RNA sequence: GGGAACGACUCGAGUAGAGUCGAAAAGAUAUGGAUCGGUAGGGAGCUGUGGGUCGGAAACGACCCUCAGCAUCGAUCUACUCGAUCCUAAGUCAAACAGCUUGUACGGUUCGCCGUACAAGCUGAACAACGGGAUAAUGUUCGCAUUAUCCCGUUGAAAAGAAACAACAACAACAAC
Reactivity to 2A3 in 0.01 (KOAc 150mM, MgCl2 10mM, bicine 150mM(pH8.5), 24C), signal-to-noise 1, nucleotides 027 to 126: g000a000u000a010u070g000g010a000u000c000g000g020u000a010g010g010g100a090g010c000u010g010u030g010g000g020u000c000g010g020a010a010a000c010g000a000c010c010c000u000c010a000g020c000a000u100c030g000a000u020c010u000a010c040u080c120g000a000u000c000c010u000a010a010g000u010c020a080a080a190c000a040g000c010u010u010g000u010a000c020g000g090u040u140c300g030c140c000g000u010a000c000a000a010g010c000u010g000a000a030
Reactivity to DMS in 0.01 (KOAc 150mM, MgCl2 10mM, bicine 150mM(pH8.5), 24C), signal-to-noise 3, nucleotides 027 to 126: g000a020u000a040u030g000g000a020u000c000g010g020u010a020g000g010g010a050g030c000u000g010u000g010g010g020u010c000g010g000a020a010a050c000g010a010c010c000c010u000c000a010g040c010a100u010c230g000a090u010c000u000a010c010u010c010g010a010u000c000c000u000a010a090g000u000c010a180a140a300c000a010g010c000u000u000g000u000a000c000g000g000u010u020c300g020c000c010g010u000a000c010a010a000g020c010u000g000a050a160